[RMDB]
RNA sequence: GGGAACGACUCGAGUAGAGUCGAAAAUCUCAAAGCUUCGGCUUUGAGACAGUAAGGGAAACCGAUUAUUCCGGUCGACACCGGAGAAACAAAGUCAAAUAAGAACGUUAGGCUUCGGCCUAACGAAUCAAAGAUGUCGUUUCGACGACAUCUUUGAAAAAGAAACAACAACAACAAC
Reactivity to 2A3 in 0.01 (KOAc 150mM, MgCl2 10mM, bicine 150mM(pH8.5), 24C), signal-to-noise 2, nucleotides 027 to 126: u000c010u000c000a010a000a000g010c020u070u140c260g070g000c010u010u020u000g020a000g010a000c000a010g110u070a040a090g050g030g050a060a030a010c000c020g000a000u050u070a200u250u000c000c000g020g000u030c030g010a030c140a300c300c000g010g000a010g100a000a000a000c000a030a000a000g040u080c090a050a040a060u180a080a060g060a100a020c010g000u000u010a000g010g000c000u040u060c220g040g030c000c000u000a000a000c000g000a000a020
Reactivity to DMS in 0.01 (KOAc 150mM, MgCl2 10mM, bicine 150mM(pH8.5), 24C), signal-to-noise 2, nucleotides 027 to 126: u000c000u000c000a000a000a000g020c000u020u010c270g050g000c000u000u000u000g020a010g000a010c070a040g020u000a120a110g000g020g000a090a110a260c030c000g000a100u010u010a120u000u010c010c020g000g000u000c020g000a010c000a100c000c010g000g000a010g000a100a010a280c160a000a010a000g000u000c000a150a150a110u000a080a110g000a110a100c020g010u000u000a000g000g010c020u000u010c250g060g000c010c010u000a000a000c000g020a040a060
Annotation:
The data come from the RNA Mapping Database (RMDB), library M2PK50. The record gives the reactivity of an RNA of 177 nucleotides to 2A3 and DMS. Reactivities are rounded to 0.1 and cut off at 0 and 3.